[RMDB]
RNA sequence: GGGAACGACUCGAGUAGAGUCGAAAAUCCUAAGUCUCUGCGUCACCCAAGCUCAUCGAUCGCUGGGAAGGUAUCGGAAACGAUACAGCAGCACUCGCGGGAGAGCUUGACAAGUCGCAGAGAUAUGGAAAAAGGCGCCAUCUUCGGAUGGCGCCAACAUGCUAUUAGGCUUCGGCCUAAUAGCAUGAAAAGAAACAACAACAACAAC
Reactivity to 2A3 in 0.01 (KOAc 150mM, MgCl2 10mM, bicine 150mM(pH8.5), 24C), signal-to-noise 1, nucleotides 027 to 156: u030c000c000u010a030a040g030u000c000u000c000u010g020c000g010u030c020a140c070c050c000a000a000g020c010u050c020a260u250c100g060a080u080c030g000c030u230g010g020g030a030a030g090g010u000a000u030c020g050g000a040a070a080c000g000a020u000a000c030a050g140c020a000g040c060a090c060u050c060g000c000g050g010g020a040g000a000g020c000u000u000g010a060c040a000a300g000u000c000g000c000a000g000a000g000a000u000a050u010g000g000a000a020a120a110a120g010g000c000g000c050c000a000u050c000u080u120c300g080g000a000u000g010g010c020g000c040c000a000a000